An RNA of 177 nucleotides, treated with 2A3 and read out base by base. Values cover nucleotides 27 to 126.
[RMDB]
RNA sequence: GGGAACGACUCGAGUAGAGUCGAAAAUAUCAAACGUAAAGCACCAUGCCACGCAAUACCAAAGACACCACCGGAGUGCUUUACGAAUCCGAUGUCGAGACAGUAGACGGUGGAUUGUCGACGGAGCGCGAUCAGUGGAUUUCGAUCCACUGAUCGCAAAAGAAACAACAACAACAAC
Reactivity to 2A3 in 0.01 (KOAc 150mM, MgCl2 10mM, bicine 150mM(pH8.5), 24C), signal-to-noise 2, nucleotides 027 to 126: u300a000u120c100a070a060a000c060g000u010a000a030a000g000c010a000c060c000a070u190g020c110c030a040c050g050c100a090a030u140a210c020c000a070a050a000g030a000c010a000c040c000a010c030c010g020g050a040g000u020g020c000u020u000u000a000c000g070a000a050u060c060c030g040a080u170g050u100c090g050a000g080a140c030a010g160u210a000g070a020c000g000g000u000g020g020a110u160u090g000u000c000g000a000c130g020g010a020g020c120